[RMDB]
RNA sequence: GGGAACGACUCGAGUAGAGUCGAAAAGUACCAAUUAUCUCCUCGCUGGUGAUGGGCCUUGUCGGCCUGGUGAUUCCAUUAGUCUGGCCGAUUUUCGCCAUGGGUAUUAGCGGCUUGGGCCAUAUGAACCAUCCAUGAUGUUCGCAUCAUGGAUGGUAAAAGAAACAACAACAACAAC
Reactivity to DMS in 0.01 (KOAc 150mM, MgCl2 10mM, bicine 150mM(pH8.5), 24C), signal-to-noise 2, nucleotides 027 to 126: g010u000a100c030c020a120a080u010u000a040u000c070u000c010c030u000c090g030c060u000g000g030u000g000a050u010g000g000g010c010c030u000u010g010u000c080g000g000c010c010u020g000g010u000g000a150u010u010c100c090a080u000u000a240g000u000c030u000g010g000c020c020g000a020u000u000u000u010c120g020c020c030a090u000g010g010g000u010a080u000u000a050g010c040g010g000c070u000u000g010g000g010c040c030a000u000a060u010g030a140
Reactivity to 2A3 in 0.01 (KOAc 150mM, MgCl2 10mM, bicine 150mM(pH8.5), 24C), signal-to-noise 2, nucleotides 027 to 126: g030u020a030c000c000a000a030u170u100a070u090c050u010c030c000u080c060g020c050u050g000g050u030g040a060u040g040g030g010c010c010u050u080g060u040c020g000g050c000c000u010g020g030u020g010a080u220u020c030c000a030u090u110a040g040u010c020u030g010g040c040c010g030a050u130u020u030u060c030g000c010c010a050u050g100g000g040u190a110u100u100a030g050c030g010g000c030u020u030g050g010g000c030c000a030u120a080u100g050a000